[RMDB]
Overview: Structure probing data (DMS and 2A3) for a 207-nucleotide construct. DMS (dimethyl sulfate) methylates the pairing face of unpaired adenines and cytosines. For DMS the reverse transcriptase was MarathonRT. Conditions: 150 mM KOAc, 10 mM MgCl2 and 150 mM bicine (pH 8.5), 24 C. 2A3 adducts were read by reverse transcription with SuperScript II with manganese. For 2A3, 5,280 sequencing reads were counted.

RNA sequence: GGGAACGACUCGAGUAGAGUCGAAAAUGGUGUGUGCCUGUGGUGCCAGCUACUCAGAAGGCUGCCGUGGGAGGACCACUUGAGUCCAUGAGGCGGAAGCUGCAGUGAGCCAUGGUGGCACCACUACACUCCAGCCAGGGCAACAGAGAGAGGCGCAUACCUAAAUACCGUUCGCGGUAUUUAGGUAAAAAGAAACAACAACAACAAC
Reactivity to DMS in 0.01 (KOAc 150mM, MgCl2 10mM, bicine 150mM(pH8.5), 24C), signal-to-noise 2, nucleotides 027 to 156: u000g010g030u000g040u010g020u000g020c010c050u000g060u030g000g050u000g020c010c010a100g040c020u000a040c030u000c000a110g000a210a300g020g030c010u000g010c010c010g000u000g020g020g000a270g000g000a050c000c010a150c160u000u010g000a170g050u000c020c020a110u000g010a300g000g040c010g010g000a020a040g010c000u000g010c070a260g000u010g000a100g010c030c040a120u000g010g030u000g010g020c000a020c020c020a000c010u000a000c000a050c000u010c030c060a150g000c010c000a160g000g010g030c000a040a130c030a030g020a050g020a080g000a080g020g010c060g000c080a210
Reactivity to 2A3 in 0.01 (KOAc 150mM, MgCl2 10mM, bicine 150mM(pH8.5), 24C), signal-to-noise 3, nucleotides 027 to 156: u050g000g000u020g010u000g010u020g050c030c080u050g000u000g020g000u010g000c000c000a080g100c040u010a020c000u000c010a050g030a270a030g080g000c000u020g010c010c000g010u060g020g080g050a130g010g000a020c010c020a090c140u130u270g050a060g050u010c020c010a070u190g050a050g120g100c000g000g010a010a010g000c040u060g020c100a140g100u000g040a010g030c130c080a110u070g040g050u010g040g000c000a000c000c000a000c000u000a010c000a000c000u000c000c000a010g000c020c020a020g000g030g000c020a110a020c070a040g020a010g000a000g000a010g040g010c030g000c060a030